[RMDB]
RNA sequence: GGGAACGACUCGAGUAGAGUCGAAAAGUUGCCCGAGAAGAGAUCAGACAGAUGAGACACAAGGAGCGAUGUCUCAUCACUUGGUUUUCGACAAGUGACGAGUCGUUCCCAAAAUCGCUCCAAUGAAGUAAGUUAACCCAUUCGUGGGUUAACUUACAAAAGAAACAACAACAACAAC
Reactivity to DMS in 0.01 (KOAc 150mM, MgCl2 10mM, bicine 150mM(pH8.5), 24C), signal-to-noise 1, nucleotides 027 to 126: g010u010u000g010c160c000c000g000a180g000a130a190g000a060g000a070u000c080a090g010a090c110a080g000a000u000g000a010g000a000c000a000c150a080a050g010g010a000g010c020g010a070u000g000u000c000u000c000a010u000c000a080c100u000u000g010g000u000u000u000u000c000g030a020c000a080a150g010u000g000a110c020g050a040g000u000c000g010u000u000c000c000c000a000a000a050a020u010c020g010c010u000c030c010a100a080u030g020a090a150
Annotation:
The data come from the RNA Mapping Database (RMDB), library M2PK90. An RNA of 177 nucleotides, treated with DMS and read out base by base. Conditions: 150 mM KOAc, 10 mM MgCl2 and 150 mM bicine (pH 8.5), 24 C. Reactivities are given for positions 27 through 126.